[RMDB]
RNA sequence: GGGAACGACUCGAGUAGAGUCGAAAAUGUAGAGUCUGUUGGGGCAGACGGGUAAAAAUCCAAAGAAUAGAGACAAUCCGCAGCUGACCUGGCCAAAAGUAUAUUUACAAAGUAGCUAGGCAGUUCAACGCUCGCUAAGAUGUGGGUUGACCAUUAAUCUUAGUAGUUUCUUCGGAAACUACUAAGAAAAAGAAACAACAACAACAAC
Reactivity to DMS in 0.01 (KOAc 150mM, MgCl2 10mM, bicine 150mM(pH8.5), 24C), signal-to-noise 2, nucleotides 027 to 156: u020g040u010a120g030a140g020u020c010u000g000u000u000g050g020g050g020c020a100g010a050c040g000g020g000u000a040a110a070a040a050u000c010c020a080a050a090g030a220a170u000a050g000a140g010a100c020a060a090u010c070c010g000c030a060g030c000u020g020a090c010c000u020g000g000c000c000a090a030a130a240g040u000a000u010a130u010u010u000a090c020a050a170a110g000u000a070g010c010u000a030g010g000c020a050g010u000u000c030a050a040c010g020c060u010c000g020c030u000a020a180g010a230u010g000u000g010g010g000u010u000g000a140c020c030a080u020u000a110a160
Reactivity to 2A3 in 0.01 (KOAc 150mM, MgCl2 10mM, bicine 150mM(pH8.5), 24C), signal-to-noise 2, nucleotides 027 to 156: u160g010u090a030g020a030g100u010c040u010g090u110u100g020g000g000g030c000a020g020a050c000g000g050g000u110a150a150a010a010a060u070c040c030a000a010a120g060a060a080u110a130g060a000g000a010c020a030a030u040c020c040g030c020a000g000c030u030g090a300c000c000u000g010g000c000c010a000a000a030a020g000u020a090u000a100u170u300u020a020c000a000a040a000g000u010a020g000c000u000a010g000g000c020a000g010u000u040c010a040a050c090g010c030u070c010g030c090u080a020a020g020a090u020g000u030g020g030g000u010u020g050a080c020c010a010u060u150a070a080